[RMDB]
RNA sequence: GGGAACGACUCGAGUAGAGUCGAAAAGUUAGGUGAGGCGGCUACACGAACAUAGGCCACUGACCCCGAACGUCGAGAGACGCCCCGGGUCAGGACAGCUCUUCCCGGCAUAAGGGUUGAGCCCAGGUAUCACCCUGGCUAUUCGUAGCCAGGGUAACCUAAGUGAGUGUUUCGACACUCACUUAGGAAAAGAAACAACAACAACAAC
Reactivity to DMS in 0.01 (KOAc 150mM, MgCl2 10mM, bicine 150mM(pH8.5), 24C), signal-to-noise 1, nucleotides 027 to 156: g010u000u000a060g020g010u010g000a080g040g010c030g020g010c020u000a060c070a100c020g000a120a080c090a140u000a160g040g000c000c000a090c020u010g000a020c030c010c000c030g000a030a010c000g000u000c020g010a300g010a300g000a020c000g000c010c020c110c200g010g000g010u000c000a020g010g000a070c040a090g010c020u000c020u000u000c020c010c020g040g020c130a120u000a120a180g000g020g020u010u000g050a090g020c000c010c020a110g010g010u000a100u010c090a020c000c000c000u000g000g000c000u010a000u000u000c280g000u000a050g000c000c000a060g010g010g040u000a000a010
Reactivity to 2A3 in 0.01 (KOAc 150mM, MgCl2 10mM, bicine 150mM(pH8.5), 24C), signal-to-noise 2, nucleotides 027 to 156: g040u070u050a030g030g020u010g030a000g040g010c040g000g030c050u090a050c090a010c100g080a150a000c070a100u180a090g070g020c050c020a040c020u000g000a010c000c010c000c020g000a010a010c000g010u010c000g000a030g000a010g000a090c000g070c040c030c020c000g030g000g000u000c000a000g050g010a000c010a020g020c000u000c000u020u030c010c000c000g000g050c090a150u180a210a080g000g000g000u000u000g000a000g000c030c080c020a040g050g030u080a060u220c060a040c000c000c000u000g000g000c010u000a010u010u100c280g040u040a000g010c000c010a010g000g030g000u010a010a010